The data come from the RNA Mapping Database (RMDB), library M2PK50. An RNA of 177 nucleotides, treated with DMS and 2A3 and read out base by base. The reactions ran in a buffer of 150 mM KOAc, 10 mM MgCl2 and 150 mM bicine (pH 8.5), at 24 C. Reactivities are given for positions 27 through 126. High 2A3 reactivity points to a flexible backbone, as in loops and unpaired stretches. DMS adducts were read by reverse transcription with MarathonRT. For 2A3 the reverse transcriptase was SuperScript II with manganese.

RNA sequence: GGGAACGACUCGAGUAGAGUCGAAAAGGGUAGAUCUUCGGAUCUACCCAAAAGGAGCAACCAACGAAGGAAGUGCUAGCAUAAGCGUGCAGGCUAGGACUAAAAGGUUCCGCUUCGGCGGAACCAACCUUACUAAUCGGUUCGCCGAUUAGUAAGGAAAAGAAACAACAACAACAAC
Reactivity to DMS in 0.01 (KOAc 150mM, MgCl2 10mM, bicine 150mM(pH8.5), 24C), signal-to-noise 4, nucleotides 027 to 126: g010g010g010u000a000g000a010u000c000u000u010c200g050g010a010u000c000u000a010c000c000c000a010a000a040a080g000g010a090g010c060a080a170c040c050a060a100c190g000a090a090g000g020a090a050g010u000g000c010u000a020g000c050a070u000a070a120g000c070g010u000g020c080a090g010g010c020u000a010g000g000a040c030u000a070a070a090a120g010g000u000u000c000c000g020c000u000u010c160g040g030c000g020g000a010a000c000c000a010a020
Reactivity to 2A3 in 0.01 (KOAc 150mM, MgCl2 10mM, bicine 150mM(pH8.5), 24C), signal-to-noise 2, nucleotides 027 to 126: g020g000g000u010a000g000a010u010c020u070u100c250g000g000a000u000c010u000a000c000c000c000a010a000a000a000g010g000a060g040c010a040a070c020c020a050a060c130g110a110a050g180g070a070a040g030u050g100c010u030a010g030c010a070u040a280a000g070c020g110u100g020c100a020g080g000c010u030a030g000g040a010c020u060a000a010a060a130g000g000u000u010c010c010g010c010u020u020c170g060g000c000g010g000a000a000c000c000a010a000